Conditions: 150 mM KOAc, 10 mM MgCl2 and 150 mM bicine (pH 8.5), 24 C. The record gives the reactivity of an RNA of 177 nucleotides to 2A3 and DMS. For DMS, 2,121 sequencing reads were counted. The 2A3 profile rests on 2,047 reads. The data come from the RNA Mapping Database (RMDB), library OK2TRN.
[RMDB]
RNA sequence: GGGAACGACUCGAGUAGAGUCGAAAACUAGCCUGUAAGGAAGACUACAGGUAUGCGAUCUCGUCAACCAACGAGAUAGGGCUGUUGGGUGCUGAGGGUCUCACCACUACCUGGAAAGAAUACAGCCGAAUCUGUGACUUUUCGAAGUCACAGAUUCAAAAGAAACAACAACAACAAC
Reactivity to 2A3 in 0.01 (KOAc 150mM, MgCl2 10mM, bicine 150mM(pH8.5), 24C), signal-to-noise 3, nucleotides 027 to 126: c000u040a070g030c000c000u000g000u000a070a070g120g110a120a110g140a110c030u010a000c020a020g030g030u040a070u070g060c030g060a010u010c010u010c010g000u010c050a190a210c090c000a000a000c000g000a010g040a020u020a080g070g010g000c010u040g040u090u080g070g010g020u080g070c090u030g010a180g000g020g040u040c060u050c060a080c000c000a040c010u060a070c040c000u080g070g130a160a120a000g060a090a040u150a080c030a000g060c040c040
Reactivity to DMS in 0.01 (KOAc 150mM, MgCl2 10mM, bicine 150mM(pH8.5), 24C), signal-to-noise 3, nucleotides 027 to 126: c060u010a250g010c010c010u000g020u040a050a140g020g030a140a080g020a170c100u000a030c010a000g010g020u000a050u010g020c160g000a030u000c000u000c000g020u010c100a070a180c300c180a120a020c000g020a000g010a010u000a070g050g000g000c020u000g000u000u000g010g010g010u000g010c120u010g000a070g010g040g010u010c040u000c100a070c110c030a070c090u010a030c110c030u000g000g000a070a100a080g010a080a070u000a070c050a040g010c080c090